This 177-nucleotide RNA was probed chemically with 2A3 and DMS. Reactivities are given for positions 27 through 126. For DMS, 3,418 sequencing reads were counted. 2A3 adducts were read by reverse transcription with SuperScript II with manganese. For DMS the reverse transcriptase was MarathonRT.
[RMDB]
RNA sequence: GGGAACGACUCGAGUAGAGUCGAAAAGCACACAAGCAUCUGACCAUUUUUAGUUUUAACUUUAAUCAUGAAUUUACCACACGUUGGGCAUUCUGUGGUUGUUAAAUUAUCGUGUUUAUAUUUACGAUCCUUAUGACCAAUUCGUUGGUCAUAAGGAAAAAGAAACAACAACAACAAC
Reactivity to 2A3 in 0.01 (KOAc 150mM, MgCl2 10mM, bicine 150mM(pH8.5), 24C), signal-to-noise 1, nucleotides 027 to 126: g020c010a040c040a020c000a080a040g050c010a090u050c040u140g090a090c030c040a050u020u080u010u100u130a100g020u000u000u000u150a030a000c000u040u040u220a040a020u090c040a040u030g020a020a030u050u090u200a130c000c020a010c010a040c090g120u150u030g020g030g000c000a000u000u070c040u070g030u020g000g000u030u030g020u010u010a060a060a060u130u100a060u090c010g000u020g090u080u150u010a210u060a100u060u070u000a000c010g060a040
Reactivity to DMS in 0.01 (KOAc 150mM, MgCl2 10mM, bicine 150mM(pH8.5), 24C), signal-to-noise 4, nucleotides 027 to 126: g000c040a050c090a080c110a090a120g010c060a030u010c070u000g010a160c070c040a060u000u010u010u000u000a060g010u000u010u010u000a020a060c030u000u000u000a040a040u000c000a020u000g010a020a010u000u010u010a150c010c000a030c050a100c160g020u010u000g010g000g010c250a030u000u000c030u000g040u000g010g000u000u010g000u000u000a030a020a040u010u010a080u010c040g000u000g000u010u000u010a110u020a080u030u000u010a030c050g000a060